[RMDB]
This 207-nucleotide RNA was probed chemically with DMS and 2A3. The RNA was probed in 150 mM KOAc, 10 mM MgCl2 and 150 mM bicine (pH 8.5) at 24 C. The data come from the RNA Mapping Database (RMDB), library OK3TST. The DMS profile rests on 10,310 reads. For 2A3 the reverse transcriptase was SuperScript II with manganese.
RNA sequence: GGGAACGACUCGAGUAGAGUCGAAAAAGCUUGUCACGUCAAUUCGCGAGGAGGGUGCAAUGAACUGUGGGAUUGCCGUUGGUUCUGAUGUGACACCAGGAGACGCCACAGCUGAGCUUGAUCAGUGUAUCAGCAUGAGUGAUCACAUUGACAUUGGAAUAGGGGGUUAAUUCGUUAACCCCCUAUUAAAAGAAACAACAACAACAAC
Reactivity to DMS in 0.01 (KOAc 150mM, MgCl2 10mM, bicine 150mM(pH8.5), 24C), signal-to-noise 4, nucleotides 027 to 156: a070g030c040u000u000g020u010c020a050c150g030u000c050a090a170u010u000c060g060c060g000a130g030g020a070g000g020g020u000g010c060a070a060u000g010a040a070c050u000g000u010g010g010g020a140u000u000g030c010c030g000u000u010g010g020u000u000c030u020g000a100u000g000u000g000a070c060a070c020c020a070g000g020a140g010a110c080g000c000c020a050c030a100g020c020u000g010a100g000c090u010u000g000a100u000c010a090g020u000g020u000a090u000c020a050g020c110a140u010g010a150g030u000g010a100u010c020a040c020a060u000u010g020a060c070a180u010u000g020g000
Reactivity to 2A3 in 0.01 (KOAc 150mM, MgCl2 10mM, bicine 150mM(pH8.5), 24C), signal-to-noise 3, nucleotides 027 to 156: a000g060c070u090u030g030u030c020a010c070g010u050c040a040a110u150u080c070g000c020g090a050g000g030a010g020g000g000u050g000c020a030a090u110g020a130a030c070u080g000u070g030g010g090a150u020u150g040c030c010g000u010u050g030g010u040u080c030u040g030a040u040g030u050g030a010c000a010c050c000a020g060g010a040g020a020c020g040c020c000a040c000a000g020c000u040g010a000g020c030u080u100g060a080u140c030a030g060u010g000u110a070u100c010a000g100c020a070u100g030a020g070u030g010a070u010c040a000c000a060u050u060g050a040c020a050u000u090g070g040